[RMDB]
RNA sequence: GGGAACGACUCGAGUAGAGUCGAAAACCCAUACUAUGGGAACUGCUGGGUUCCUCGGAUGUCGAUCCCCUCUCCCGUUCGGGAAAAGGGGGACUCCGGAACUCCCUGCAGGCUGGGGACGAAGCCCGUACGCGCGUGUUCGCACGCGCGAAAAGAAACAACAACAACAAC
Reactivity to DMS in 0.01 (KOAc 150mM, MgCl2 10mM, bicine 150mM(pH8.5), 24C), signal-to-noise 1, nucleotides 027 to 129: c030c000c000a130u050a040c240u110a090u040g000g000g000a070a140c030u000g010c020u020g000g070g020u000u000c060c050u000c090g000g040a070u070g000u010c060g000a160u100c000c000c010c020u020c140u010c020c020c000g010u000u000c000g000g000g000a000a000a000a000g000g000g000g000g000a020c040u000c000c010g000g000a020a040c090u020c010c000c020u020g000c070a090g000g000c080u000g020g010g030g040a080c000g030a130a030g050c060c030c000g060u040a010
Reactivity to 2A3 in 0.01 (KOAc 150mM, MgCl2 10mM, bicine 150mM(pH8.5), 24C), signal-to-noise 3, nucleotides 027 to 129: c000c010c020a020u080a020c090u090a100u170g000g010g060a070a050c020u000g000c000u020g010g010g000u050u010c000c000u010c020g000g000a080u150g020u030c040g100a250u180c020c020c020c010u000c010u000c000c000c020g170u300u300c160g000g000g000a000a000a000a000g020g000g010g000g000a000c010u020c020c000g000g000a000a000c010u060c000c010c010u040g010c020a000g010g000c030u060g030g000g000g050a060c040g060a070a010g010c000c020c030g000u040a050
This 170-nucleotide RNA was probed chemically with DMS and 2A3. 2A3 is a SHAPE reagent: it acylates the 2'-hydroxyl of flexible nucleotides of all four kinds. The 2A3 profile rests on 4,773 reads. The RNA was probed in 150 mM KOAc, 10 mM MgCl2 and 150 mM bicine (pH 8.5) at 24 C.